This 207-nucleotide RNA was probed chemically with 2A3 and DMS. For DMS, 5,553 sequencing reads were counted.
[RMDB]
RNA sequence: GGGAACGACUCGAGUAGAGUCGAAAAGUGCGGAUAACGCCCACCGGAUGGUAAUAACGAAUAGGAUGACCUUAGUACCUCCACAUAACAUAAUAACAAAAGGUCACAAUGGGCAAUCCGCAGCCAAGCUCCCAUAUGUUGGGAGAAGGUUCAGAGAGAGGUAGUACUAUUUCGAUAGUACUACCUCAAAAGAAACAACAACAACAAC
Reactivity to 2A3 in 0.01 (KOAc 150mM, MgCl2 10mM, bicine 150mM(pH8.5), 24C), signal-to-noise 5, nucleotides 027 to 156: g040u020g000c000g000g000a010u040a170a050c110g000c000c010c010a040c020c020g090g060a130u170g040g060u160a120a100u180a250a110c110g060a090a070u090a150g120g050a140u030g000a010c000c030u040u030a020g050u090a070c010c050u070c120c050a090c010a080u230a120a040c050a050u280a280a080u150a180a020c040a040a110a020a000g000g000u010c000a000c030a050a060u090g000g000g000c000a000a010u020c000c000g000c000a010g000c000c000a040a010g010c000u020c000c000c020a000u090a050u170g190u060u040g010g000g000a000g000a010a010g000g000u050u130c090a040g030a000g020a000
Reactivity to DMS in 0.01 (KOAc 150mM, MgCl2 10mM, bicine 150mM(pH8.5), 24C), signal-to-noise 3, nucleotides 027 to 156: g010u010g010c000g060g010a090u000a050a120c080g030c000c000c000a080c080c040g050g000a130u020g030g010u030a120a110u000a100a210c100g000a160a120u000a130g020g000a160u000g020a060c010c010u000u000a120g030u000a060c020c020u010c010c040a120c090a170u000a070a150c090a070u000a060a090u010a070a090c040a160a130a080a010g000g000u000c010a030c040a100a110u000g010g050g050c010a150a060u000c010c000g000c010a030g000c030c010a070a150g010c020u000c000c000c010a070u000a070u000g010u000u000g010g000g000a020g010a000a040g010g000u000u000c060a130g020a170g010a300
It was measured as part of the RMDB library OK3TST.